[RMDB]
Structure probing data (2A3 and DMS) for a 207-nucleotide construct. For 2A3 the reverse transcriptase was SuperScript II with manganese. Values cover nucleotides 27 to 156. The RNA was probed in 150 mM KOAc, 10 mM MgCl2 and 150 mM bicine (pH 8.5) at 24 C. It was measured as part of the RMDB library OK3TST. For 2A3, 1,133 sequencing reads were counted. Values are in units of 0.01, from 0 to 300, in steps of 10.

RNA sequence: GGGAACGACUCGAGUAGAGUCGAAAAGCGCAACAUCCAGCGCGUGGGUGCAUCUCUCGAAAACGGGAUUAACCGUGUGUUCCUGACGGAACUCGUCGACAACGCACAGAACAACCACGACACCGCCGGGAGUAAUCAGGGCUAUCAGGCUCUCAACCUACAAGGCAGAUUUCGAUCUGCCUUGUAGAAAAGAAACAACAACAACAAC
Reactivity to 2A3 in 0.01 (KOAc 150mM, MgCl2 10mM, bicine 150mM(pH8.5), 24C), signal-to-noise 2, nucleotides 027 to 156: g060c020g000c060a010a130c020a180u040c010c040a000g040c020g040c020g050u040g040g000g020u000g020c090a160u060c020u010c010u010c030g060a100a110a040a050c050g000g000g000a120u110u180a050a090c020c030g000u050g020u020g050u050u000c030c030u070g100a040c020g010g020a110a060c060u020c160g040u000c000g030a030c050a060a010c050g000c060a030c000a040g090a090a050c050a100a030c060c040a050c000g040a000c040a040c030c000g010c010c010g010g000g010a020g040u040a060a020u050c100a020g000g000g020c020u070a090u300c100a050g130g000c000u050c010u010c050a080a080c010
Reactivity to DMS in 0.01 (KOAc 150mM, MgCl2 10mM, bicine 150mM(pH8.5), 24C), signal-to-noise 1, nucleotides 027 to 156: g010c050g040c050a130a020c060a040u000c050c000a140g000c070g090c070g040u000g030g010g000u000g010c100a180u010c020u000c030u000c010g040a120a200a090a140c020g030g000g120a140u010u000a060a190c070c010g010u030g010u000g040u000u000c020c110u000g040a120c190g040g000a100a160c060u000c000g000u010c040g030a160c070a050a080c000g000c030a210c080a110g010a070a050c030a140a050c050c040a060c000g000a100c000a070c120c030g000c040c000g000g000g010a140g040u050a030a200u030c300a000g060g000g060c000u000a110u030c140a160g000g000c020u000c000u000c000a100a150c140